Structure probing data (2A3 and DMS) for a 207-nucleotide construct. The reactions ran in a buffer of 150 mM KOAc, 10 mM MgCl2 and 150 mM bicine (pH 8.5), at 24 C. Source: RMDB library OK3TST, as collected in RNAgym. For DMS the reverse transcriptase was MarathonRT. For DMS, 6,553 sequencing reads were counted.
RNA sequence: GGGAACGACUCGAGUAGAGUCGAAAAGUAUGUCACGAUUAUGUGACUAGCCAUAAUCGAUGAAGGUACUCGACUUCAUCGUGACAUAGCAUUGUCAGUGCGUACUGGCUAGUCACAGUACGGCAGACAACACUCCUAGUCUGCCACUGACUAGGAACGAUUCUAGCUAGUUCGCUAGCUAGAAUCGAAAAGAAACAACAACAACAAC
Reactivity to 2A3 in 0.01 (KOAc 150mM, MgCl2 10mM, bicine 150mM(pH8.5), 24C), signal-to-noise 8, nucleotides 027 to 156: g060u060a080u100g000u000c020a000c100g070a220u100u090a060u150g000u010g000a000c000u000a000g000c000c000a040u080a080a060u090c010g000a000u010g010a000a000g040g030u130a120c090u060c130g140a050c020u030u000c000a000u000c000g000u000g000a030c050a100u160a040g020c010a040u070u130g180u300c130a070g030u010g040c010g020u050a070c060u020g000g000c000u000a000g000u000c000a000c000a000g000u030a010c000g020g060c050a040g010a030c000a030a010c040a030c040u010c000c000u000a000g000u000c020u070g160c050c000a050c060u040g000a000c000u000a000g020g000a030a040
Reactivity to DMS in 0.01 (KOAc 150mM, MgCl2 10mM, bicine 150mM(pH8.5), 24C), signal-to-noise 3, nucleotides 027 to 156: g020u000a030u010g010u000c010a090c050g010a210u000u000a070u010g010u000g000a040c020u000a040g040c020c000a070u000a130a160u000c010g000a020u010g000a020a010g020g000u000a130c240u000c110g010a120c000u000u010c000a010u000c000g010u010g000a190c110a080u000a100g000c040a080u000u000g030u010c090a170g010u000g000c000g000u010a120c140u000g020g010c020u000a030g000u000c010a010c010a020g000u000a050c020g000g010c010a070g010a050c030a030a080c070a120c130u010c000c010u010a030g000u000c000u010g020c080c100a030c070u000g000a010c000u000a020g000g000a060a240